This 177-nucleotide RNA was probed chemically with DMS and 2A3. The DMS profile rests on 2,468 reads. The data come from the RNA Mapping Database (RMDB), library TTRDEL. The reactions ran in a buffer of 150 mM KOAc, 10 mM MgCl2 and 150 mM bicine (pH 8.5), at 24 C. The 2A3 profile rests on 3,657 reads.
RNA sequence: GGGAACGACUCGAGUAGAGUCGAAAAGAUAUGGAGUUGUAGACAUGGAGGAGAAGGGUCGGAAACGACCCGUAACUCCAACAGCUACACCUCCUAAGUCAAACGGGGGAAGUUCGCUUCCCCCGAACUUGACCAAUAGGUUCGCCUAUUGGUCAAGAAAAGAAACAACAACAACAAC
Reactivity to DMS in 0.01 (KOAc 150mM, MgCl2 10mM, bicine 150mM(pH8.5), 24C), signal-to-noise 3, nucleotides 027 to 126: g020a050u010a300u000g000g010a020g010u010u000g010u010a000g000a050c090a210u010g000g000a140g000g000a130g020a130a150g000g000g030u000c000g010g010a100a060a150c000g000a010c000c000c000g000u010a010a180c000u000c000c000a020a100c250a110g000c010u000a000c010a000c060c010u000c000c000u000a030a110g000u000c010a050a100a160c040g010g000g010g020g000a000a010g030u010u010c290g000c000u000u000c000c010c000c000c010g000a000a010
Reactivity to 2A3 in 0.01 (KOAc 150mM, MgCl2 10mM, bicine 150mM(pH8.5), 24C), signal-to-noise 2, nucleotides 027 to 126: g040a020u110a060u230g000g000a010g020u020u020g020u010a040g010a090c070a300u110g000g030a010g030g000a050g010a060a040g000g000g000u000c000g000g000a080a040a050c020g010a000c020c020c000g000u000a000a000c000u010c000c000a000a000c030a000g000c000u030a010c000a010c000c000u020c010c000u020a140a020g040u030c050a060a080a160c040g000g000g040g000g000a000a010g020u070u140c190g130c140u010u010c000c000c010c020c010g000a000a000